[RMDB]
Notes:
Chemical mapping of a 177-nucleotide RNA with DMS. The reactions ran in a buffer of 150 mM KOAc, 10 mM MgCl2 and 150 mM bicine (pH 8.5), at 24 C. It was measured as part of the RMDB library RFMREP.
RNA sequence: GGGAACGACUCGAGUAGAGUCGAAAAGCCGACAGCGGCCGGGUAAGGGUGAAACGGUGGUGUAAGAGACCACCAGCGCCUCGGGUGACCGGGGCGGCUCGGUAAACCCCACCCGGAGCAAGGCCAACUUGUUACUACUGUUCGCAGUAGUAACAAGAAAAGAAACAACAACAACAAC
Reactivity to DMS in 0.01 (KOAc 150mM, MgCl2 10mM, bicine 150mM(pH8.5), 24C), signal-to-noise 1, nucleotides 027 to 126: g010c000c000g020a110c200a180g000c000g000g020c000c000g030g000g000u000a190a130g000g010g010u010g000a130a170a080c080g030g000u000g000g000u000g000u010a140a080g000a300g000a020c000c000a010c000c000a040g010c010g030c000c000u000c040g000g000g030u010g000a140c000c020g000g000g020g000c030g000g000c000u000c100g000g030u000a040a300a040c000c010c000c100a070c030c020c000g030g020a300g000c020a060a080g000g000c010c170a090a110